[RMDB]
RNA sequence: GGGAACGACUCGAGUAGAGUCGAAAAGAGAUGAUGUCCCCUAUGGGUAUCUCAGGACUGGUGUGGGCCAAGCAGCAGGAGGAGGCGGCUGAAAUUCUACAAUUGUGCCUCCCUCGGAGGGACCGUCGGAUGUGGGUUAAUUCGUUAACCCACAUCCAAAAGAAACAACAACAACAAC
Reactivity to 2A3 in 0.01 (KOAc 150mM, MgCl2 10mM, bicine 150mM(pH8.5), 24C), signal-to-noise 1, nucleotides 027 to 126: g070a000g000a020u080g020a020u100g090u110c030c000c000c020u070a160u280g020g010g060u100a050u010c040u020c060a050g050g060a040c010u050g090g000u070g020u050g030g020g060c020c010a050a010g040c020a020g000c000a020g000g050a030g030g000a030g020g050c020g000g010c000u040g030a080a060a020u110u060c010u080a090c050a110a120u080u070g030u070g030c000c010u010c000c000c000u060c060g050g010a070g020g020g000a020c010c030g050u080c050
Reactivity to DMS in 0.01 (KOAc 150mM, MgCl2 10mM, bicine 150mM(pH8.5), 24C), signal-to-noise 2, nucleotides 027 to 126: g000a110g010a060u000g020a070u020g010u000c000c000c020c240u000a110u000g010g020g030u010a030u000c030u020c030a110g000g000a070c050u000g030g010u010g020u000g010g020g040c070c110a110a110g010c030a060g020c040a050g020g010a130g000g000a050g010g020c060g040g010c060u000g000a030a060a070u000u000c160u000a080c150a070a090u000u000g010u000g010c010c010u000c020c010c050u000c100g010g000a040g000g000g030a070c070c150g010u010c110
Chemical mapping of a 177-nucleotide RNA with 2A3 and DMS. The RNA was probed in 150 mM KOAc, 10 mM MgCl2 and 150 mM bicine (pH 8.5) at 24 C. For DMS the reverse transcriptase was MarathonRT. The 2A3 profile rests on 1,311 reads.